[RMDB]
RNA sequence: GGGAACGACUCGAGUAGAGUCGAAAACAAUGGGCGAAAGCCUGACGGAGCGACGCCGCGUGCGGGAUGAAGGCCUUCGGGUUGUAAACCGCUGUCAGAGGGGAUGAAAUCGUUGGGGGCUAUCCCCUUGAGAUACAUACUUCGGUAUGUAUCUCAAAAAAGAAACAACAACAACAAC
Reactivity to DMS in 0.01 (KOAc 150mM, MgCl2 10mM, bicine 150mM(pH8.5), 24C), signal-to-noise 9, nucleotides 027 to 126: c090a110a070u040g010g020g000c020g000a090a080a150g020c020c000u010g010a130c080g000g000a100g020c040g000a090c060g010c030c020g010c080g030u010g000c020g000g010g000a030u040g010a220a300g000g000c000c010u000u030c140g020g010g010u000u000g000u000a010a300a300c020c020g000c010u010g000u010c090a080g010a080g020g000g000g000a040u000g010a050a090a070u020c070g010u000u010g000g010g000g000g010c110u010a070u010c010c000c010c040
Reactivity to 2A3 in 0.01 (KOAc 150mM, MgCl2 10mM, bicine 150mM(pH8.5), 24C), signal-to-noise 6, nucleotides 027 to 126: c050a020a180u190g040g010g000c020g040a120a040a010g020c000c000u020g040a020c040g020g020a050g000c040g050a060c020g030c030c000g050c040g030u070g000c010g000g030g010a060u300g020a070a000g010g000c010c000u060u080c180g090g000g000u020u030g000u020a020a000a000c000c000g000c050u030g050u060c020a020g030a030g040g010g010g020a030u030g090a050a030a090u130c070g020u040u090g050g000g000g000g000c030u050a080u110c010c000c000c000